[RMDB]
RNA sequence: GGGAACGACUCGAGUAGAGUCGAAAACGGGUCGGCGACGUCGUUGUCGGCUCCGAAGCCGAGGGGGUGCUGCACGCCGGAACCACGCGGCGCGACGAUGGCGCGAUCGUUUCGUCCGGUGGCCGGGCAUUUGCAAUCGCUUCGGCGAUUGCAAAUGAAAAGAAACAACAACAACAAC
Reactivity to DMS in 0.01 (KOAc 150mM, MgCl2 10mM, bicine 150mM(pH8.5), 24C), signal-to-noise 1, nucleotides 027 to 126: c090g000g010g000u000c000g000g000c020g000a030c030g020u020c280g040u010u000g000u000c010g010g000c020u000c000c020g010a080a170g010c020c030g000a110g000g000g010g010g010u000g020c090u030g000c040a090c240g000c000c000g010g000a080a130c010c020a050c010g000c110g000g000c020g000c090g000a030c010g010a020u010g020g010c110g020c100g010a230u000c010g000u000u010u000c030g010u010c010c000g000g010u000g020g010c020c030g030g000g010
Overview
The record gives the reactivity of an RNA of 177 nucleotides to DMS. Conditions: 150 mM KOAc, 10 mM MgCl2 and 150 mM bicine (pH 8.5), 24 C.